Annotation:
Chemical mapping of a 177-nucleotide RNA with 2A3 and DMS. 2A3 adducts were read by reverse transcription with SuperScript II with manganese. For 2A3, 2,712 sequencing reads were counted. For DMS, 2,364 sequencing reads were counted.

RNA sequence: GGGAACGACUCGAGUAGAGUCGAAAAAUUGGCCAUAUACAACAAUGACAAUAGCCCUGUUACAUGCUCAAAUGGGUUUGCCCAAUACAGUUACAGAUGACAUUCUCUUGCGGAGCUAGAGCAGGUCAGUCUUACCCUGAUUCGUCAGGGUAAGACUAAAAGAAACAACAACAACAAC
Reactivity to 2A3 in 0.01 (KOAc 150mM, MgCl2 10mM, bicine 150mM(pH8.5), 24C), signal-to-noise 3, nucleotides 027 to 126: a000u060u040g020g000c060c020a010u100a000u040a130c070a110a000c020a100a140u090g060a030c020a020a100u030a070g050c030c010c000u000g040u020u090a100c050a070u090g000c020u030c050a090a090a160u090g040g000g000u020u020u060g080c060c010c000a030a010u160a070c060a030g060u120u100a040c040a050g100a070u040g050a040c020a050u050u010c070u020c000u030u050g010c070g110g030a040g000c030u050a030g020a000g060c020a010g050g000u060c010
Reactivity to DMS in 0.01 (KOAc 150mM, MgCl2 10mM, bicine 150mM(pH8.5), 24C), signal-to-noise 3, nucleotides 027 to 126: a080u000u000g020g010c050c010a020u000a140u010a130c120a060a120c130a080a080u000g020a050c040a050a080u020a130g010c100c020c020u000g000u000u010a100c100a070u010g000c060u000c040a070a080a100u000g000g000g000u000u000u000g020c020c020c060a100a050u020a150c150a090g000u000u010a070c150a090g000a090u000g000a050c040a030u000u000c020u010c020u000u000g000c160g030g010a050g000c040u020a140g000a030g010c100a030g000g010u010c080